[RMDB]
Structure probing data (DMS) for a 177-nucleotide construct. The DMS profile rests on 995 reads.
RNA sequence: GGGAACGACUCGAGUAGAGUCGAAAAGAAACACCAGCGCCCAGGAAGAAAAACCUGAACGUGAACUGCUUGACGAAACACGAACGCUGGUGUAAAUCGUCAAGAAGCAGAAAGAAAAGAAAGAAAACACGGAUCAUACUUUCGAGUAUGAUCCGUGAAAAGAAACAACAACAACAAC
Reactivity to DMS in 0.01 (KOAc 150mM, MgCl2 10mM, bicine 150mM(pH8.5), 24C), signal-to-noise 1, nucleotides 027 to 126: g000a090a050a000c010a000c170c080a000g000c010g020c270c160c020a080g000g050a040a030g010a200a000a060a170a050c000c000u000g000a140a060c010g000u000g050a050a040c000u030g000c000u030u010g030a000c050g000a020a130a100c000a000c140g000a090a090c300g030c000u170g020g000u070g030u000a000a000a070u000c010g010u000c010a070a050g010a260a130g030c160a000g000a100a000a120g030a170a040a080a180g000a040a030a100g010a080a060a050a150